[RMDB]
RNA sequence: GGGAACGACUCGAGUAGAGUCGAAAAGGCGCGCGUUUCGCGCGGGAGAGGCGCGGGUUUGGCCCGGGAAGGCUCUGGUUUGGCCCGCGAAAGGCCCGCGUUUGGCCUGCGAAAGGCGCGCGAAAAACCAUCAGGGUAGGUUCGCCUGCCCUGGUGGAAAAGAAACAACAACAACAAC
Reactivity to DMS in 0.01 (KOAc 150mM, MgCl2 10mM, bicine 150mM(pH8.5), 24C), signal-to-noise 5, nucleotides 027 to 126: g010g010c010g020c020g020c010g000u000u000u010c270g000c040g020c100g010g010g010a040g000a060g000g010c000g000c040g000g000g000u000u020u010g000g020c150c200c030g010g000g000a270a060g010g010c020u010c180u050g000g000u000u000u030g000g010c000c000c000g000c280g000a000a100a050g000g000c000c000c010g020c030g020u000u010u010g000g000c010c000u000g010c020g000a020a040a030g000g020c010g000c000g010c000g000a010a030a040a120a110
Reactivity to 2A3 in 0.01 (KOAc 150mM, MgCl2 10mM, bicine 150mM(pH8.5), 24C), signal-to-noise 9, nucleotides 027 to 126: g110g010c010g000c010g000c120g060u010u030u040c050g010c010g000c060g020g000g000a060g000a020g020g020c010g000c000g010g020g010u060u130u100g060g010c020c030c020g010g010g010a070a040g090g010c050u070c160u260g130g060u090u080u100g140g060c000c000c000g010c050g010a010a010a000g030g010c000c000c000g010c000g000u010u030u040g110g020c010c010u030g000c010g000a030a010a010g050g000c000g000c000g000c000g000a020a000a000a000a010